Structure probing data (DMS and 2A3) for a 177-nucleotide construct. The 2A3 profile rests on 964 reads. DMS adducts were read by reverse transcription with MarathonRT. The data come from the RNA Mapping Database (RMDB), library OK1LIB.

[RMDB]
RNA sequence: GGGAACGACUCGAGUAGAGUCGAAAAUAUAGAAAGUGUUCCAUAUCAUCUCUUAGUUUCAUUUACCAACUUCGAAAACUAUUACGAACACUUAAAGAUGAUACAAAUUUAUGAAAACUUAUAGGUCUAAUUAAUAAAUGUUCGCAUUUAUUAAUUAAAAAGAAACAACAACAACAAC
Reactivity to DMS in 0.01 (KOAc 150mM, MgCl2 10mM, bicine 150mM(pH8.5), 24C), signal-to-noise 2, nucleotides 027 to 126: u070a080u030a180g000a130a020a060g000u000g010u000u000c010c060a260u020a000u000c020a020u000c020u000c080u030u010a010g000u000u000u020c010a030u030u030u010a120c070c160a090a090c150u000u030c080g020a020a010a080a070c210u020a050u030u050a040c260g020a020a000c060a010c020u000u020a000a030a030g000a050u000g020a040u020a030c160a090a090a130u060u010u030a020u040g010a120a060a040a120c020u020u010a100u010a100g020g000u000c010
Reactivity to 2A3 in 0.01 (KOAc 150mM, MgCl2 10mM, bicine 150mM(pH8.5), 24C), signal-to-noise 2, nucleotides 027 to 126: u250a010u060a010g150a050a120a000g060u050g010u070u010c000c000a000u000a010u110c000a010u000c000u000c000u000u060a000g010u020u040u020c080a120u180u090u120a210c050c050a080a140c150u090u120c030g110a020a040a110a120c100u140a110u290u070a080c020g000a010a020c010a010c070u000u040a020a020a000g010a000u000g010a000u030a010c030a040a120a010u100u110u000a120u090g080a110a090a010a000c000u100u090a050u110a300g020g000u020c020